Description:
Structure probing data (2A3 and DMS) for a 207-nucleotide construct. Values cover nucleotides 27 to 156.
[RMDB]
RNA sequence: GGGAACGACUCGAGUAGAGUCGAAAAUAUUAGAGAGUGUAGCAAAUAACAUUCUUGUGAAUAUUAUGAAAUUACUUAGUAUAACACAACUCAAUACCAGGGUAUGACCUACACUAGGCACCCUGACUUCUGAUUGCCAGAAUUAAGGAUGGUGCAAACGUAUCCUUUUAUUCGUAAAAGGAUACGUAAAAGAAACAACAACAACAAC
Reactivity to 2A3 in 0.01 (KOAc 150mM, MgCl2 10mM, bicine 150mM(pH8.5), 24C), signal-to-noise 5, nucleotides 027 to 156: u080a030u080u120a010g010a010g010a000g040u010g010u020a020g040c040a050a130a100u150a070a100c030a040u070u050c000u050u080g050u050g020a030a030u060a030u100u100a070u120g060a110a090a130u140u060a060c040u050u070a010g030u050a060u110a190a040c030a010c000a040a120c020u070c090a040a050u050a110c060c020a030g080g000g000u050a100u130g080a150c000c000u030a030c060a090c120u050a020g040g000c010a010c000c000c000u010g010a010c010u020u030c010u030g050a130u060u240g050c050c010a020g020a040a030u070u060a120a010g060g020a050u090g070g000u070g040c000a150a020
Reactivity to DMS in 0.01 (KOAc 150mM, MgCl2 10mM, bicine 150mM(pH8.5), 24C), signal-to-noise 3, nucleotides 027 to 156: u000a060u000u010a300g010a070g020a100g040u000g010u000a060g010c050a080a110a140u000a040a050c010a030u000u000c010u000u000g040u000g020a090a050u000a020u010u000a120u020g000a110a110a130u000u000a060c000u000u000a070g010u000a060u010a050a160c100a130c030a060a120c100u000c060a070a080u010a060c060c040a060g020g010g020u010a040u000g020a190c300c020u000a060c130a080c090u010a050g030g040c030a030c020c030c000u010g010a020c160u000u010c040u000g010a210u010u000g000c110c030a120g020a070a050u000u000a100a040g000g010a100u020g010g020u020g030c040a060a080